[RMDB]
The record gives the reactivity of an RNA of 207 nucleotides to 2A3. The 2A3 profile rests on 794 reads.
RNA sequence: GGGAACGACUCGAGUAGAGUCGAAAAGCCUCCUCGCUUCCAUAGAAAGGGGACGGGGCAGAUCGCAAGUACUACAACCGAGCGGUGGUAUCUGUCAAACUAAGCAGCCACUGCACAUCAAUUGACUAAACGAUGCCGAUCUUCGGAUCGGCAUCAACAACAGUGAUCGGUUCGCCGAUCACUGUUGAAAAGAAACAACAACAACAAC
Reactivity to 2A3 in 0.01 (KOAc 150mM, MgCl2 10mM, bicine 150mM(pH8.5), 24C), signal-to-noise 2, nucleotides 027 to 156: g040c000c000u000c010c010u010c000g020c080u050u000c030c010a120u040a090g300a010a090a140g040g000g000g000a020c050g050g000g000g000c040a090g010a100u090c050g000c090a050a040g060u010a080c010u060a040c030a110a070c010c140g110a030g000c000g050g000u000g020g020u120a110u180c000u040g080u130c080a100a140a270c130u220a130a010g000c000a000g050c010c000a010c000u030g100c040a020c000a040u230c040a070a230u110u240g110a090c060u070a040a060a040c100g000a000u000g000c000c000g050a030u020c000u020u110c190g070g000a000u000c000g000g000c000a000u000c000a020a000